[RMDB]
This 207-nucleotide RNA was probed chemically with DMS and 2A3. Reactivities are given for positions 27 through 156. Source: RMDB library M2RFPK, as collected in RNAgym. For DMS the reverse transcriptase was MarathonRT. The reactions ran in a buffer of 150 mM KOAc, 10 mM MgCl2 and 150 mM bicine (pH 8.5), at 24 C. For 2A3 the reverse transcriptase was SuperScript II with manganese. The DMS profile rests on 4,596 reads.
RNA sequence: GGGAACGACUCGAGUAGAGUCGAAAAGAAACGCAAGGCCGCUGACCGACGGGAUAUUGUGGGGCUUACCACAGGGGACGCGGCGUUAUCACUUGCCUUUUAAGCCGACGGUCUGGGCUGCAUACAAACCACCCAACUAUCUUCGGAUAGUUGGGAACAUUCUACUCAAGUUCGCUUGAGUAGAAUGAAAAGAAACAACAACAACAAC
Reactivity to DMS in 0.01 (KOAc 150mM, MgCl2 10mM, bicine 150mM(pH8.5), 24C), signal-to-noise 2, nucleotides 027 to 156: g010a090a090a090c040g010c020a070a110g040g000c010c010g020c010u000g000a170c030c020g040a180c150g010g000g030a080u020a070u000u000g020u000g020g000g010g010c150u010u010a110c030c030a050c040a100g030g020g030g010a120c080g000c040g030g000c020g000u010u000a080u010c060a110c040u020u000g010c020c010u040u000u010u010a060a150g020c030c000g010a070c020g010g010u000c030u010g010g010g020c020u000g030c030a090u000a060c090a040a080a100c040c040a150c000c010c010a010a020c010u010a000u000c010u010u000c300g030g000a020u000a010g000u000u000g010g000g000a020a030
Reactivity to 2A3 in 0.01 (KOAc 150mM, MgCl2 10mM, bicine 150mM(pH8.5), 24C), signal-to-noise 5, nucleotides 027 to 156: g020a000a050a020c070g000c060a040a080g090g020c020c020g130c120u050g020a010c000c010g020a040c050g040g040g030a070u130a110u150u090g010u020g000g020g040g100c110u100u120a080c010c000a010c020a040g000g000g000g060a020c060g010c070g090g050c000g020u060u040a030u050c030a020c120u030u160g010c000c000u040u130u020u070a090a010g040c000c000g020a050c020g000g010u000c020u040g010g010g010c050u020g010c050a040u120a070c050a030a070a010c030c020a040c010c000c000a000a000c000u000a000u000c010u000u060c110g050g000a000u000a000g000u000u000g000g000g000a000a000
The 2A3 profile rests on 4,334 reads.